[RMDB]
RNA sequence: GGGAACGACUCGAGUAGAGUCGAAAAUUAGUGAAUCUUGCUUUGUCUCAAGCUAUGAUGUGUUGCAGGAAGUUGAAGCGCUGCGACAUGAUAUACAAUUGGAUGAUGAUGCUCGUGUCUUUGUGCAGGCUAAUAUGGACUGUCUGCCCACAGACUGCCCAUGCCUUGUUUUCGAACAAGGCAUGGGAAAAGAAACAACAACAACAAC
Reactivity to 2A3 in 0.01 (KOAc 150mM, MgCl2 10mM, bicine 150mM(pH8.5), 24C), signal-to-noise 1, nucleotides 027 to 156: u120u070a000g050u010g160a080a030u100c000u010u090g000c000u050u010u040g100u060c060u030c070a040a070g030c060u110a030u050g060a050u130g000u000g010u030u030g050c000a000g010g010a160a080g030u090u100g050a150a030g050c060g030c030u010g000c000g000a000c000a000u030g010a010u030a030u000a010c100a110a120u020u030g080g000a030u060g040a000u000g000a000u000g090c020u050c070g090u060g000u010c000u030u040u000g000u010g000c000a010g010g000c030u030a020a060u140a230u230g070g150a040c100u050g000u010c000u020g060c080c010c000a010c000a000g010a000c030u040g020
Notes
The data come from the RNA Mapping Database (RMDB), library OK3TST. The record gives the reactivity of an RNA of 207 nucleotides to 2A3. Values cover nucleotides 27 to 156. Conditions: 150 mM KOAc, 10 mM MgCl2 and 150 mM bicine (pH 8.5), 24 C. For 2A3 the reverse transcriptase was SuperScript II with manganese.